[RMDB]
RNA sequence: GGGAACGACUCGAGUAGAGUCGAAAAGCCAGAUCAGCCUCCCAGCUGAGUGUCAGCACUGAUGGCACGCAUCUGGAUGAAGCCGUCAGCCGCACCAACCACAAGAAGCACAGAUGAAGCUGCUGGCCCACAGUAUACGGUUCGCCGUAUACUGUGGAAAAGAAACAACAACAACAAC
Reactivity to 2A3 in 0.01 (KOAc 150mM, MgCl2 10mM, bicine 150mM(pH8.5), 24C), signal-to-noise 6, nucleotides 027 to 126: g030c000c020a010g000a180u260c020a010g010c000c020u020c000c000c000a000g010c010u020g010a020g000u030g030u060c080a020g010c040a010c080u050g030a040u020g010g020c020a010c160g020c000a080u060c100u230g300g030a170u050g050a060a020g010c020c010g010u010c010a020g060c100c100g020c030a090c050c050a060a050c030c030a040c020a080a040g130a120a010g040c030a020c030a080g130a090u120g080a110a020g020c010u020g000c000u010g000g000c000
Reactivity to DMS in 0.01 (KOAc 150mM, MgCl2 10mM, bicine 150mM(pH8.5), 24C), signal-to-noise 5, nucleotides 027 to 126: g010c020c000a020g000a090u000c020a050g030c010c070u000c020c020c030a230g010c040u010g000a150g010u010g020u010c080a090g000c070a140c100u010g010a040u000g010g010c000a040c140g000c050a020u000c100u010g010g010a070u000g010a070a060g010c030c010g000u000c010a020g010c110c080g030c030a110c060c060a080a140c130c060a050c070a070a090g000a140a120g000c030a060c100a100g010a100u000g000a080a100g000c020u000g000c000u000g000g020c050